[RMDB]
RNA sequence: GGGAACGACUCGAGUAGAGUCGAAAAUCUUAUAUGUUCGCAUAUAAGAAAAGGCGGAGUAGUGUUGGGUGGCGAAAGGCCAUAAAUUAACAAUCACUCAGAUACAGACCUGGUUCGCCAGGUCUAAAGGUGCAUCUAUAUUCGUAUAGAUGCACCUAAAAGAAACAACAACAACAAC
Reactivity to 2A3 in 0.01 (KOAc 150mM, MgCl2 10mM, bicine 150mM(pH8.5), 24C), signal-to-noise 2, nucleotides 027 to 126: u030c000u000u000a020u000a000u050g000u000u050c090g000c060a000u010a000u000a010a000g030a000a130a030a000g020g010c020g030g010a020g000u030a000g000u050g140u250u000g040g000g010u000g010g020c000g010a140a020a000g110g000c010c000a040u130a030a080a010u080u070a050a020c020a050a030u100c000a000c020u040c010a000g020a070u180a070c090a000g010a000c010c000u000g000g010u000u040c030g030c080c010a000g000g030u000c000u000a010a000
Reactivity to DMS in 0.01 (KOAc 150mM, MgCl2 10mM, bicine 150mM(pH8.5), 24C), signal-to-noise 4, nucleotides 027 to 126: u000c000u000u000a000u010a000u000g010u000u030c200g000c000a000u000a000u010a000a000g010a050a070a110a140g000g010c050g000g020a060g010u000a050g020u010g010u010u000g000g010g020u000g010g010c020g000a090a060a110g000g010c010c010a040u010a020a060a110u010u000a070a110c100a060a060u010c050a030c020u010c030a060g010a130u010a100c260a030g000a010c000c000u010g010g000u000u010c240g010c000c000a000g000g010u000c000u000a000a050
This 177-nucleotide RNA was probed chemically with 2A3 and DMS. The reactions ran in a buffer of 150 mM KOAc, 10 mM MgCl2 and 150 mM bicine (pH 8.5), at 24 C. Source: RMDB library M2PK50, as collected in RNAgym. For 2A3, 1,914 sequencing reads were counted.